[RMDB]
Overview: The record gives the reactivity of an RNA of 207 nucleotides to 2A3. The 2A3 profile rests on 432 reads. High 2A3 reactivity points to a flexible backbone, as in loops and unpaired stretches.

RNA sequence: GGGAACGACUCGAGUAGAGUCGAAAAAUUUCCUCUUUGUCUUCCUCAGCUUUUGGCUUCUAUUAUUGUGGUUGUCAUUAUUGUGCUUUUCAUGUUCACAAGAUGACUGCCACAUCUCCAUGUCACAUCCAUGGUCAAGGUGGGAAAAAGGAGUUAACCCCAUGGACUGGUUCGCCAGUCCAUGGGGAAAAGAAACAACAACAACAAC
Reactivity to 2A3 in 0.01 (KOAc 150mM, MgCl2 10mM, bicine 150mM(pH8.5), 24C), signal-to-noise 1, nucleotides 027 to 156: a000u090u110u050c020c000u020c060u050u040u090g070u000c030u090u000c000c000u090c050a090g070c060u020u230u120u210g060g020c050u210u020c040u170a190u250u060a080u170u040g000u000g000g000u000u000g020u040c020a000u000u110a280u260u000g000u010g010c000u040u160u170u240c090a060u160g030u070u070c010a000c000a000a000g010a000u000g000a030c020u000g040c020c000a010c010a000u000c000u000c000c000a060u040g000u000c040a010c040a130u020c090c020a010u000g000g000u000c020a000a010g030g010u050g040g000g090a030a140a020a000a020g000g070a040g000u020u050a080a140
Overview: For 2A3 the reverse transcriptase was SuperScript II with manganese. It was measured as part of the RMDB library OK3TST. The reactions ran in a buffer of 150 mM KOAc, 10 mM MgCl2 and 150 mM bicine (pH 8.5), at 24 C.